This 207-nucleotide RNA was probed chemically with DMS and 2A3. The reactions ran in a buffer of 150 mM KOAc, 10 mM MgCl2 and 150 mM bicine (pH 8.5), at 24 C. The data come from the RNA Mapping Database (RMDB), library OK3TST.

RNA sequence: GGGAACGACUCGAGUAGAGUCGAAAAGCUUCCGGAGGAAGAGUAUCAGAGCCAGAGGUAAGAAGUCACCUUCCUCUUCAUGGCCCCUCUGGUAUGCAACAGGCGACUUUGCACAAUGGCCUCAGCUCUCUUCCCCUGAGCCUAGGCCCUGGCCUUGCAGGCUAAAACAAUUCGUUGUUUUAGCCUGAAAAGAAACAACAACAACAAC
Reactivity to DMS in 0.01 (KOAc 150mM, MgCl2 10mM, bicine 150mM(pH8.5), 24C), signal-to-noise 2, nucleotides 027 to 156: g000c010u000u000c050c030g020g020a090g030g010a050a030g000a140g030u000a070u000c100a160g010a150g010c010c000a060g000a220g020g010u020a070a230g000a030a050g000u000c060a040c000c050u000u000c050c020u010c040u000u000c050a080u020g010g000c010c010c080c050u020c060u000g030g010u000a010u010g030c050a070a020c120a040g020g020c020g000a060c030u000u010u000g000c190a110c030a060a240u010g010g000c000c010u010c050a170g020c110u000c010u000c020u010u010c020c020c010c070u010g000a060g030c010c030u000a110g020g020c010c010c040u010g020g000c000c010u000u010g010
Reactivity to 2A3 in 0.01 (KOAc 150mM, MgCl2 10mM, bicine 150mM(pH8.5), 24C), signal-to-noise 3, nucleotides 027 to 156: g010c020u110u040c060c040g020g000a150g050g000a020a020g020a040g060u150a090u180c080a060g020a020g050c010c020a010g010a000g080g040u120a140a050g040a080a040g070u090c120a090c100c070u090u020c020c030u070c000u060u070c060a120u100g050g000c000c020c010c000u040c010u020g010g020u030a050u090g050c070a070a020c020a070g030g000c020g050a110c060u110u100u140g070c130a050c060a170a150u120g050g000c020c010u020c040a000g010c010u010c000u010c000u000u030c000c010c000c000u010g000a000g000c000c000u040a080g040g000c000c000c020u070g030g010c000c010u000u070g020